[RMDB]
RNA sequence: GGGAACGACUCGAGUAGAGUCGAAAAGACACGACGGAGACGUCGUGUCAAAGAGUGGGAAACCACUCAAAGAGCCACAGCUUCGGCUGUGGCUCAAGGCGCCGCACCGUCUGCGGAACCAACGGAAAAUCGUACUAUACUUCGGUAUAGUACGAUUAAAAGAAACAACAACAACAAC
Reactivity to DMS in 0.01 (KOAc 150mM, MgCl2 10mM, bicine 150mM(pH8.5), 24C), signal-to-noise 1, nucleotides 027 to 126: g000a010c000a010c000g000a030c000g000g020a230g000a250c000g030u000c000g000u010g020u000c020a010a080a080g020a020g020u000g000g000g000a210a110a180c000c000a010c000u020c010a030a110a140g010a030g000c000c000a040c000a030g020c040u000u010c240g040g000c000u010g030u010g000g000c000u000c000a050a030g000g000c300g010c010c000g000c030a050c070c150g010u020c070u000g010c010g000g020a010a070c050c030a110a120c210g010g010a030a060
Reactivity to 2A3 in 0.01 (KOAc 150mM, MgCl2 10mM, bicine 150mM(pH8.5), 24C), signal-to-noise 1, nucleotides 027 to 126: g000a010c020a000c000g000a010c000g000g040a050g020a060c010g010u010c010g000u010g010u000c010a000a010a000g010a000g010u010g000g000g000a030a090a040c000c000a000c000u010c000a050a060a000g010a000g000c020c000a000c030a030g060c000u180u290c300g140g000c000u000g000u080g010g100c010u040c000a010a020g010g000c100g000c000c010g000c010a050c030c050g290u190c070u040g000c000g010g030a010a060c030c000a040a060c010g130g040a030a220
Annotation
Source: RMDB library OK2TRN, as collected in RNAgym. This 177-nucleotide RNA was probed chemically with DMS and 2A3. The reactions ran in a buffer of 150 mM KOAc, 10 mM MgCl2 and 150 mM bicine (pH 8.5), at 24 C. For DMS the reverse transcriptase was MarathonRT. For 2A3 the reverse transcriptase was SuperScript II with manganese.